[RMDB]
RNA sequence: GGGAACGACUCGAGUAGAGUCGAAAAUCUUUUUAAGUGCUUUGAAACCCUCGAUGAAUGUGUCAAUGUGCAAAGAUAAACCAUUGUUCUCUGUUGAUCAGUGACUUAAUGUUUGCUUUGGAGAAUGUUUAUUAAAUGGAUUCGUCCAUUUAAUAAAAAAAGAAACAACAACAACAAC
Reactivity to DMS in 0.01 (KOAc 150mM, MgCl2 10mM, bicine 150mM(pH8.5), 24C), signal-to-noise 9, nucleotides 027 to 126: u010c010u000u010u010u010u020a060a100g040u000g010c040u000u010u010g010a080a080a080c040c060c030u010c070g010a100u010g000a080a060u020g010u010g010u010c030a050a040u010g010u010g020c030a030a030a050g000a050u000a040a090a090c060c050a090u010u010g010u000u000c010u000c040u010g020u010u010g010a080u020c080a040g020u010g010a040c060u000u010a060a080u010g010u010u000u010g010c020u000u000u000g010g000a060g010a050a060u020g010
Reactivity to 2A3 in 0.01 (KOAc 150mM, MgCl2 10mM, bicine 150mM(pH8.5), 24C), signal-to-noise 8, nucleotides 027 to 126: u030c010u010u100u010u020u060a140a060g030u050g050c030u040u060u090g100a130a090a080c020c020c000u010c040g100a150u130g080a150a060u130g070u020g030u060c030a020a060u060g020u050g050c030a060a040a030g040a080u100a040a060a010c010c010a040u040u060g030u090u010c040u000c010u030g090u080u080g080a100u130c040a040g000u000g080a020c000u040u130a110a050u170g050u030u040u080g040c000u050u050u060g030g020a060g040a070a060u120g030